[RMDB]
Chemical mapping of a 177-nucleotide RNA with DMS and 2A3. Source: RMDB library OK2TST, as collected in RNAgym. For DMS the reverse transcriptase was MarathonRT.

RNA sequence: GGGAACGACUCGAGUAGAGUCGAAAAUAGUUCCACCACUUGGAGGCCGAGAUGGACUUGAGCCCAGGAGGUGGAGGCUUCAGUAAGCCAAGAUCAUACCACUGCCCCUCAGCCUGGGCAACAGAGACGUCAUGAUACUGUUCGCAGUAUCAUGACGAAAAGAAACAACAACAACAAC
Reactivity to DMS in 0.01 (KOAc 150mM, MgCl2 10mM, bicine 150mM(pH8.5), 24C), signal-to-noise 3, nucleotides 027 to 126: u000a080g020u000u000c010c010a090c070c050a130c040u040u010g010g010a090g040g000c070c070g010a110g010a190u000g020g010a100c040u020u010g010a270g010c010c000c000a040g000g000a060g010g020u000g000g010a100g000g000c030u000u010c140a120g020u010a070a080g000c000c040a090a120g010a110u010c100a160u040a070c000c050a080c080u000g010c020c000c000c010u010c060a160g020c050c050u000g010g000g000c030a000a050c170a100g000a120g020a170
Reactivity to 2A3 in 0.01 (KOAc 150mM, MgCl2 10mM, bicine 150mM(pH8.5), 24C), signal-to-noise 2, nucleotides 027 to 126: u050a020g060u050u000c020c010a020c000c010a050c030u060u030g070g050a090g120g010c010c010g020a020g040a140u180g080g040a070c020u020u040g000a030g040c020c000c000a010g010g010a020g060g010u050g020g010a060g000g000c010u100u060c100a120g020u160a140a010g040c000c000a040a020g070a080u110c050a040u060a050c020c050a100c090u080g010c020c000c000c010u040c010a000g000c020c030u010g030g000g000c010a010a000c000a000g080a010g000a050